Structure probing data (2A3) for a 207-nucleotide construct.
2A3 adducts were read by reverse transcription with SuperScript II with manganese.
Source: RMDB library OK3TST, as collected in RNAgym.
The reactions ran in a buffer of 150 mM KOAc, 10 mM MgCl2 and 150 mM bicine (pH 8.5), at 24 C.

RNA sequence: GGGAACGACUCGAGUAGAGUCGAAAAUUUAGGUUCAUCUGUCUCCUGAUGCAGAUGCAUAUUCUCCAGGCCAAACUGUGUCUCUUAAUAUGGCAACUGGAAUGGAUUCCUGGGUGGCAUUAGCAGCAGUGGACAGUGCUGUGUAUGGAGUCCAAAGCGCCCGGACUAUGUUCGCAUAGUCCGGGCGAAAAGAAACAACAACAACAAC
Reactivity to 2A3 in 0.01 (KOAc 150mM, MgCl2 10mM, bicine 150mM(pH8.5), 24C), signal-to-noise 1, nucleotides 027 to 156: u070u080u070a050g000g030u060u090c000a190u020c020u020g000u000c050u030c150c000u020g000a050u060g010c000a000g000a080u000g000c020a060u200a150u110u150c190u000c010c020a010g020g100c000c000a030a000a000c000u000g000u000g010u000c000u040c000u190u300a260a300u290a160u260g000g000c000a060a300c130u250g000g010a050a050u040g010g010a080u050u280c020c020u000g000g000g000u010g010g000c000a010u000u050a050g000c000a000g000c000a000g000u030g080g000a020c030a000g010u000g000c000u030g060u010g010u030a250u060g120g000a020g110u000c000c020a020a040a000g030